[RMDB]
RNA sequence: GGGAACGACUCGAGUAGAGUCGAAAAGAUAUGGACGACGCGCUUCGAAGAACUAUAUGGAGGCGGGAAGCUAUUCGGAAACGAAUAGCUUCCCGUGAAGUAUAGGGAGAAGCCAUCGUCCUAAGUCCGUUAUAAUAAUCUUCGGAUUAUUAUAACGAAAAGAAACAACAACAACAAC
Reactivity to DMS in 0.01 (KOAc 150mM, MgCl2 10mM, bicine 150mM(pH8.5), 24C), signal-to-noise 5, nucleotides 027 to 126: g010a120u010a300u000g000g000a010c000g020a020c020g020c280g020c010u000u000c000g010a150a160g010a140a240c000u000a010u000a000u010g000g000a070g000g000c010g000g000g020a020a010g010c000u000a000u000u000c000g010g010a120a120a250c000g010a010a010u000a000g000c000u000u000c000c010c010g010u000g000a130a230g000u000a000u000a010g000g000g010a080g010a020a010g000c010c010a020u000c010g000u000c000c010u000a010a100g000u000c040
Reactivity to 2A3 in 0.01 (KOAc 150mM, MgCl2 10mM, bicine 150mM(pH8.5), 24C), signal-to-noise 2, nucleotides 027 to 126: g030a030u140a060u210g000g000a010c020g000a010c030g160c020g010c050u030u010c010g240a300a080g020a060a030c000u010a010u010a010u060g050g050a070g300g230c000g000g000g000a000a000g000c000u000a000u010u000c020g030g000a090a120a070c010g000a010a010u000a000g010c000u000u010c000c000c000g000u010g000a000a010g000u000a010u010a020g000g010g000a040g010a000a000g000c000c000a010u010c000g000u000c010c000u000a100a030g060u000c030